[RMDB]
RNA sequence: GGGAACGACUCGAGUAGAGUCGAAAAGGACUUAGGUUCGCCUAAGUCCAAAUAACGUCUACAAGUACGGUAGACGAAGAUAACGUACAGAACAGAAGUACAAAAGGAGAGACUUCGGUCUCUCCAAGUGUGCACUUAAGUUCGCUUAAGUGCACACAAAAGAAACAACAACAACAAC
Reactivity to 2A3 in 0.01 (KOAc 150mM, MgCl2 10mM, bicine 150mM(pH8.5), 24C), signal-to-noise 2, nucleotides 027 to 126: g000g000a020c000u000u000a010g000g070u040u020c210g060c040c020u020a000a000g000u000c000c000a000a000a000u010a000a010c010g000u000c000u020a000c020a050a120g140u000a040c090g050g010u010a000g010a000c040g000a020a000g030a000u100a100a000c150g010u000a040c070a090g100a220a010c030a110g230a300a060g090u010a000c050a020a140a030a000g000g000a020g000a000g000a000c010u060u090c220g080g000u000c000u000c000u000c000c000a000a000
Reactivity to DMS in 0.01 (KOAc 150mM, MgCl2 10mM, bicine 150mM(pH8.5), 24C), signal-to-noise 1, nucleotides 027 to 126: g000g000a000c000u000u000a000g000g000u000u000c170g100c020c000u010a000a000g010u010c000c000a010a050a020u000a090a140c030g040u000c000u000a030c000a080a100g010u000a090c120g000g010u000a000g030a010c010g020a080a000g020a030u010a090a140c190g010u060a170c110a030g010a090a050c220a040g020a110a050g000u000a010c080a140a040a120a110g000g010a000g000a070g000a020c000u000u010c150g030g000u000c000u000c000u000c000c000a010a000